[RMDB]
RNA sequence: GGGAACGACUCGAGUAGAGUCGAAAAGUACCGUCUUCGGACGGUACAAAAAAACCUUUGUGUCCAAACCAGCAACAGCGUGAAGUCAACCCAUUGGGUUGUCACACGACAUGCUGGUGGACACUCUGGUAAAAAUCGCAAGCUUCGGCUUGCGAAACUAUGUCUAUUUCUUCGGAAAUAGACAUAGAAAAGAAACAACAACAACAAC
Reactivity to DMS in 0.01 (KOAc 150mM, MgCl2 10mM, bicine 150mM(pH8.5), 24C), signal-to-noise 2, nucleotides 027 to 156: g000u000a000c010c000g010u000c010u000u000c300g050g010a010c000g010g010u000a000c000a010a000a020a100a040a060a030c000c010u010u000u000g000u000g000u000c010c020a080a130a110c000c010a030g000c020a060a120c120a110g020c020g000u000g020a050a200g070u000c010a030a000c030c010c000a300u000u010g080g020g020u010u000g040u000c030a300c000a000c020g000a050c060a290u000g020c000u010g050g050u020g010g010a030c000a000c020u000c030u000g020g020u000a000a060a080a080a110u000c000g000c010a020a030g020c000u000u020c300g050g010c000u000u020g030c000g000a010a010a060
Reactivity to 2A3 in 0.01 (KOAc 150mM, MgCl2 10mM, bicine 150mM(pH8.5), 24C), signal-to-noise 5, nucleotides 027 to 156: g010u010a010c000c000g000u000c010u040u080c210g110g000a000c000g000g030u000a000c000a000a000a010a000a000a010a020c000c010u000u000u010g010u000g000u000c020c030a300a240a150c020c010a050g020c010a020a120c030a180g040c010g000u020g050a210a080g060u010c000a000a010c000c010c100a300u170u300g000g000g000u010u000g000u010c000a020c010a000c100g130a130c000a030u060g000c000u000g000g000u000g000g000a000c000a000c000u000c000u000g010g020u080a100a110a030a030a020u020c000g000c000a000a000g000c000u040u300c300g120g000c000u000u000g000c000g000a000a000a000